[RMDB]
RNA sequence: GGGAACGACUCGAGUAGAGUCGAAAAAAAAGCAGCUGGAAAUGGACAACCACAAUAUGCAUAAAUCUAACUCCUACCAUCAGCUACACACUGCUUGACAUAUAUUGUUAGAAGCACCUCGCAUUUGCGCAGCAUGUACAUUCGUGUACAUGCUGCGAAAAGAAACAACAACAACAAC
Reactivity to 2A3 in 0.01 (KOAc 150mM, MgCl2 10mM, bicine 150mM(pH8.5), 24C), signal-to-noise 2, nucleotides 027 to 126: a000a000a000a010g020c030a000g000c020u090g020g040a030a150a120u070g010g000a030c020a070a030c110c030a040c020a070a090u110a060u140g060c030a050u100a070a130a030u020c020u070a010a060c010u020c010c000u010a050c020c020a050u080c040a010g020c000u040a010c050a000c000a020c060u040g010c000u040u020g040a000c020a020u110a020u040a050u100u070g030u020u040a040g020a090a010g010c050a020c020c010u030c040g040c060a090u030u020u130g000
Reactivity to DMS in 0.01 (KOAc 150mM, MgCl2 10mM, bicine 150mM(pH8.5), 24C), signal-to-noise 2, nucleotides 027 to 126: a060a000a070a010g020c000a020g020c050u010g040g000a040a020a090u020g000g010a170c100a030a010c050c050a040c110a070a180u010a100u030g000c100a090u060a050a010a060u010c040u000a070a100c110u000c010c000u030a110c030c000a050u010c090a070g050c010u010a080c060a040c060a110c020u060g020c020u030u000g030a000c080a050u000a090u010a020u040u010g010u000u070a020g000a030a080g000c050a030c040c000u000c040g030c060a100u000u020u010g000
Structure probing data (2A3 and DMS) for a 177-nucleotide construct. Values cover nucleotides 27 to 126. For DMS the reverse transcriptase was MarathonRT. 2A3 adducts were read by reverse transcription with SuperScript II with manganese. Conditions: 150 mM KOAc, 10 mM MgCl2 and 150 mM bicine (pH 8.5), 24 C.